[RMDB]
RNA sequence: GGGAACGACUCGAGUAGAGUCGAAAAGCUAGCCGGCAGCGCACGUUGUGGGUGGUGUUGCAUCUAUUCACCGCUAUCGAGGAGGUAUUGCAAGUGUCACAUUGGGUACAGGUGGUUUCGCGCUUGUCGUUGUAGGACCCAGCCGGGCACGGCUCGCAUUUUACACUAAUUUCGAUUAGUGUAAAAUAAAAGAAACAACAACAACAAC
Reactivity to DMS in 0.01 (KOAc 150mM, MgCl2 10mM, bicine 150mM(pH8.5), 24C), signal-to-noise 6, nucleotides 027 to 156: g020c040u000a080g010c030c020g030g020c040a120g020c040g030c050a100c090g020u000u000g030u000g010g010g020u010g010g020u000g010u000u010g020c040a110u000c080u000a100u010u000c040a090c030c030g010c070u000a100u010c080g010a120g000g010a100g020g020u000a070u000u000g020c040a070a100g020u010g010u010c050a060c060a180u000u000g010g010g020u000a050c070a080g000g020u000g010g020u000u000u010c080g020c060g010c050u000u000g030u000c040g010u010u000g010u000a080g020g010a120c010c000c020a220g010c040c040g000g000g020c080a070c060g020g010c010u000c030g020c250
Reactivity to 2A3 in 0.01 (KOAc 150mM, MgCl2 10mM, bicine 150mM(pH8.5), 24C), signal-to-noise 6, nucleotides 027 to 156: g030c030u040a030g050c010c020g040g010c030a030g010c030g010c040a040c100g080u080u060g020u060g050g010g010u050g010g010u020g020u040u050g010c030a050u010c030u110a110u090u080c040a030c050c020g000c050u080a060u190c060g030a070g030g020a020g060g030u060a080u060u150g020c040a070a050g050u010g040u100c040a030c020a120u040u130g050g010g020u100a080c050a060g020g040u030g020g000u050u070u110c070g000c020g000c010u030u070g040u060c030g050u050u080g050u060a050g040g040a030c000c000c000a010g040c040c020g000g030g020c060a020c050g020g000c010u010c010g030c000